[RMDB]
RNA sequence: GGGAACGACUCGAGUAGAGUCGAAAAUGGGCUCGAUCCUGUACUGGAUGAGGUUCGGCACCAUCCGGCUGCCGCCGUGGCCGGAUCGAGUGCCGUGGACCCGCGGCACCAAGCGCAAGCCGGUGGAGAUUGAUACGAGGUUCGCCUCGUAUCAAUCAAAAGAAACAACAACAACAAC
Reactivity to DMS in 0.01 (KOAc 150mM, MgCl2 10mM, bicine 150mM(pH8.5), 24C), signal-to-noise 3, nucleotides 027 to 126: u000g000g020g010c020u000c040g010a060u010c020c010u000g040u000a050c170u000g010g000a030u000g020a120g020g000u000u010c020g010g010c010a030c040c020a050u000c020c000g010g010c000u000g020c020c190g010c270c160g050u000g000g010c000c000g000g000a010u000c130g010a110g030u010g000c010c000g010u000g010g000a060c010c020c030g010c040g020g000c040a230c080c040a060a110g000c020g000c070a150a090g000c030c020g020g020u000g010g010a300
Reactivity to 2A3 in 0.01 (KOAc 150mM, MgCl2 10mM, bicine 150mM(pH8.5), 24C), signal-to-noise 1, nucleotides 027 to 126: u070g000g000g030c020u050c070g080a020u020c020c000u080g080u190a090c130u110g080g050a050u060g040a060g060g000u080u090c050g010g000c000a000c020c000a010u000c010c000g000g000c010u020g020c010c070g170c090c130g050u070g060g000c030c000g000g000a000u030c050g040a020g020u010g050c000c000g000u020g030g040a050c010c000c020g000c010g050g000c040a030c060c020a090a040g030c040g000c050a070a020g010c000c020g010g050u060g020g040a170